[RMDB]
This 177-nucleotide RNA was probed chemically with 2A3 and DMS. The RNA was probed in 150 mM KOAc, 10 mM MgCl2 and 150 mM bicine (pH 8.5) at 24 C. For DMS, 2,598 sequencing reads were counted.
RNA sequence: GGGAACGACUCGAGUAGAGUCGAAAACGAGUUGCUCUCUAAGUUCGCUGACUCGCCUGUUCUGGUGGUCGACUAUCGGUUGAUUCCCAAGCACUCGAUCGGGAUGGCGCUCGACGACUGUCACGACUAUAGUUAGCGUGUUCGCACGCUAACUAUAAAAAGAAACAACAACAACAAC
Reactivity to 2A3 in 0.01 (KOAc 150mM, MgCl2 10mM, bicine 150mM(pH8.5), 24C), signal-to-noise 2, nucleotides 027 to 126: c030g000a010g010u030u050g000c010u010c000u000c040u100a170a070g070u090u100c030g030c060u030g040a020c030u030c060g040c020c020u110g060u140u050c050u080g070g000u040g010g050u020c010g040a040c010u060a060u140c010g000g050u010u050g060a300u000u040c010c000c000a020a000g060c020a030c010u070c030g160a300u070c060g000g000g070a040u090g080g000c020g040c070u020c030g060a090c010g040a070c040u020g050u040c020a000c110g060a040c050
Reactivity to DMS in 0.01 (KOAc 150mM, MgCl2 10mM, bicine 150mM(pH8.5), 24C), signal-to-noise 3, nucleotides 027 to 126: c070g020a040g020u000u000g010c020u000c060u000c040u000a100a110g020u000u000c040g040c080u000g000a070c050u000c070g000c040c030u010g020u000u000c130u000g010g040u010g010g020u000c020g010a050c040u000a100u010c040g000g000u000u000g000a170u000u000c020c000c000a070a150g020c080a040c090u000c040g000a130u000c050g000g010g010a080u010g010g000c120g030c100u000c050g000a100c040g000a100c060u000g010u000c070a050c080g000a100c140
The 2A3 profile rests on 2,346 reads.